Record summary:
An RNA of 177 nucleotides, treated with 2A3 and DMS and read out base by base. For 2A3, 5,738 sequencing reads were counted.

RNA sequence: GGGAACGACUCGAGUAGAGUCGAAAAGAUAUGGACGUCCCAGCAAGCUCCCACUCGGAAACGAGUGUGAGAGUGAUGACCUGGUGACGUCCUAAGUCAAAGACUAGAGAGUUCGCUCUCUAGUCAAGCCAUACUGGAUGUUCGCAUCCAGUAUGGCAAAAGAAACAACAACAACAAC
Reactivity to 2A3 in 0.01 (KOAc 150mM, MgCl2 10mM, bicine 150mM(pH8.5), 24C), signal-to-noise 2, nucleotides 027 to 126: g000a000u020a010u050g000g000a000c000g000u000c000c000c000a010g020c020a050a040g020c000u010c000c000c000a000c000u000c000g020g020a010a010a000c010g010a040g010u000g010u090g020a300g010a000g020u010g120a300u040g020a020c010c000u000g000g000u070g000a000c000g000u000c000c010u000a000a000g000u000c020a090a100a080g000a000c000u010a000g010a000g000a000g040u080u140c260g180c070u000c030u000c020u020a010g000u010c000a000a010
Reactivity to DMS in 0.01 (KOAc 150mM, MgCl2 10mM, bicine 150mM(pH8.5), 24C), signal-to-noise 2, nucleotides 027 to 126: g000a020u000a060u010g000g000a020c000g020u000c010c000c000a020g000c040a040a040g000c000u010c000c040c000a000c000u000c000g000g000a030a020a040c000g020a030g000u000g030u000g000a140g010a000g060u000g010a080u010g000a030c300c000u010g010g000u010g000a020c010g020u000c000c000u000a010a050g010u000c020a170a110a170g010a040c000u000a000g000a050g000a020g030u000u030c300g030c000u000c000u000c000u010a010g010u000c020a010a110

DMS adducts were read by reverse transcription with MarathonRT. Source: RMDB library TTRDES, as collected in RNAgym. The DMS profile rests on 2,082 reads.